[RMDB]
RNA sequence: GGGAACGACUCGAGUAGAGUCGAAAAAAGAUAUUGUCGGCAGCUGAAAGCAGUAAGGAGUGAAAAUCUCUGUCAAGUUGCGAGAACAUGCGAAAGCUAUUGCCGAUGUUGUCACGCAGUAGCCGAACUAAUUAGGCCGAUUCGUCGGCCUAAUUAGAAAAGAAACAACAACAACAAC
Reactivity to DMS in 0.01 (KOAc 150mM, MgCl2 10mM, bicine 150mM(pH8.5), 24C), signal-to-noise 3, nucleotides 027 to 126: a100a040g010a080u000a020u010u000g040u010c030g010g010c020a070g000c010u000g000a110a140a300g000c020a050g000u000a100a160g020g020a030g010u000g010a100a060a190a160u000c000u000c000u000g000u010c130a060a110g000u000u000g010c060g010a100g020a060a060c090a040u000g000c060g000a070a140a080g000c040u000a040u010u000g000c010c020g000a080u000g000u000u000g010u020c040a120c190g000c040a040g020u010a060g010c020c020g010a090a200
Reactivity to 2A3 in 0.01 (KOAc 150mM, MgCl2 10mM, bicine 150mM(pH8.5), 24C), signal-to-noise 1, nucleotides 027 to 126: a000a000g130a100u140a120u060u080g020u010c000g000g000c010a010g020c020u040g040a190a050a010g000c000a010g090u070a170a020g050g000a020g000u030g060a030a020a020a060u040c010u000c000u020g050u040c000a110a020g090u110u000g040c060g010a100g050a040a030c060a020u130g000c040g040a090a040a000g010c010u070a100u210u120g000c010c000g000a030u030g000u000u060g070u040c020a000c100g060c030a060g030u030a000g070c080c070g060a000a030

The record gives the reactivity of an RNA of 177 nucleotides to DMS and 2A3. For 2A3 the reverse transcriptase was SuperScript II with manganese.